[RMDB]
RNA sequence: GGGAACGACUCGAGUAGAGUCGAAAAGUAUGGAUGCCACCGUGACGGCUCAAUCACACAAGUGCCAACGAUAACGAGGCGCUCGCUAUUGCUGCAUAACUGACGGCCUGACGGUCUGACGUUACAAAAAACGAAAAGUGGUUCGCCACUUUUCGAAGGGACUAUGUGAGUUCGCUCACAUAGUCCCAAAAGAAACAACAACAACAAC
Reactivity to 2A3 in 0.01 (KOAc 150mM, MgCl2 10mM, bicine 150mM(pH8.5), 24C), signal-to-noise 1, nucleotides 027 to 156: g070u010a010u160g020g000a030u100g030c000c020a010c030c030g020u020g040a030c060g050g000c010u000c020a040a070u110c000a020c010a010c000a110a100g010u000g010c010c020a100a040c050g080a140u070a050a050c010g000a000g240g010c080g010c100u010c030g070c010u030a010u070u200g000c050u000g000c010a000u000a070a000c000u000g000a010c090g000g020c030c030u140g090a020c110g000g010u010c000u010g010a000c030g020u030u110a030c050a040a100a060a060a080a000c020g020a000a010a010a010g030u020g030g000u030u000c170g010c030c000a000c000u030u000u000u000c000g000a010a010
Structure probing data (2A3) for a 207-nucleotide construct.
Reactivities are given for positions 27 through 156.
2A3 adducts were read by reverse transcription with SuperScript II with manganese.
The 2A3 profile rests on 561 reads.
The data come from the RNA Mapping Database (RMDB), library M2RFPK.